[RMDB]
RNA sequence: GGGAACGACUCGAGUAGAGUCGAAAAGCAUCGUCGGCAUUCAACCCCAUCGUUAGUGGCGCGAUCCGGCAUUUCCGCGCGAAAUGGCCUGAGGUGGAACUGUUUCUGACGGAGAUGAACACCAAUAUAAAUUACUCGAGUUCGCUCGAGUAAUUUAAAAAGAAACAACAACAACAAC
Reactivity to 2A3 in 0.01 (KOAc 150mM, MgCl2 10mM, bicine 150mM(pH8.5), 24C), signal-to-noise 1, nucleotides 027 to 126: g070c020a000u030c030g150u070c040g040g000c000a080u140u070c050a030a090c040c040c000c010a050u030c010g090u070u030a080g010u060g100g030c000g000c030g020a020u020c020c050g060g060c030a000u010u010u050c010c010g040c030g020c040g060a010a030a060u060g050g050c020c010u030g090a080g000g140u050g000g070a120a150c030u000g010u010u090u000c040u050g040a020c050g050g000a070g000a060u040g020a020a010c040a020c060c020a020a020u130a040
Reactivity to DMS in 0.01 (KOAc 150mM, MgCl2 10mM, bicine 150mM(pH8.5), 24C), signal-to-noise 3, nucleotides 027 to 126: g000c130a040u000c040g020u010c020g000g000c060a070u000u010c120a060a150c060c040c030c100a080u000c120g010u010u000a060g010u010g010g010c020g040c060g010a090u010c070c070g010g000c030a040u000u000u010c020c020g020c060g040c140g010a020a060a060u000g010g010c020c020u000g000a070g010g010u010g010g020a070a120c080u000g010u000u000u010c030u000g010a140c010g020g010a060g000a040u000g010a070a090c050a140c040c030a070a110u010a100

This 177-nucleotide RNA was probed chemically with 2A3 and DMS. Reactivities are given for positions 27 through 126. The RNA was probed in 150 mM KOAc, 10 mM MgCl2 and 150 mM bicine (pH 8.5) at 24 C.